[RMDB]
RNA sequence: GGGAACGACUCGAGUAGAGUCGAAAAACUGGAACUGCCGAGUGGGGCCGGAUUAACCGCCGACUCGACGCCGUUAAUGUAUCAGGGGCUGGAAGUCGGACAGCUGACUAAACUGGAUUUAAAUCCACAUCGCCUAAUCAUUCGUGAUUAGGCGAUGAAAAGAAACAACAACAACAAC
Reactivity to 2A3 in 0.01 (KOAc 150mM, MgCl2 10mM, bicine 150mM(pH8.5), 24C), signal-to-noise 1, nucleotides 027 to 126: a020c000u020g040g050a000a000c010u000g000c060c020g010a010g040u070g000g110g060g090c170c030g000g000a020u130u110a150a240c000c000g000c020c000g010a010c000u020c000g060a020c020g000c010c000g060u000u030a060a040u210g010u060a060u210c050a020g120g000g000g030c020u050g000g100a100a010g030u020c020g010g000a020c010a000g030c030u080g060a050c060u150a080a060a010c090u040g030g020a050u130u060u200a190a250a060u040c000c000a050
Reactivity to DMS in 0.01 (KOAc 150mM, MgCl2 10mM, bicine 150mM(pH8.5), 24C), signal-to-noise 1, nucleotides 027 to 126: a070c050u030g020g000a060a080c090u020g030c010c020g030a020g030u000g000g010g020g010c110c020g010g020a230u010u010a170a090c070c070g020c010c010g000a030c010u000c010g000a050c110g010c030c020g020u000u000a060a080u000g010u020a080u000c080a100g030g010g000g000c000u000g000g010a120a100g010u010c070g020g010a110c100a030g000c020u010g010a080c050u010a020a060a070c240u010g000g000a020u000u010u010a120a090a150u000c000c000a150